[RMDB]
RNA sequence: GGGAACGACUCGAGUAGAGUCGAAAACUUCCGGGGCGAGUUGGUACGCCCGGCCGCAGUGGCAUUGAUAACCGAUUAUUUGUCGACGCCAUCUUGUGGAUGGCUGCCAAUGCAGCGCACUGGCGCAAUACUCAUGGCUCUUCGGAGCCAUGAGUAUAAAAGAAACAACAACAACAAC
Reactivity to DMS in 0.01 (KOAc 150mM, MgCl2 10mM, bicine 150mM(pH8.5), 24C), signal-to-noise 2, nucleotides 027 to 126: c180u010u000c000c000g030g010g000g020c050g030a150g020u000u000g020g030u010a060c130g030c000c010c090g010g000c040c040g000c030a030g000u000g000g030c000a050u000u000g020a100u000a030a100c260c100g010a090u010u000a170u010u010u000g010u010c010g020a060c110g010c000c020a010u000c030u010u010g010u000g010g000a080u000g000g000c010u000g020c020c010a020a040u000g000c060a150g000c070g030c030a100c060u030g000g020c150g010c140a090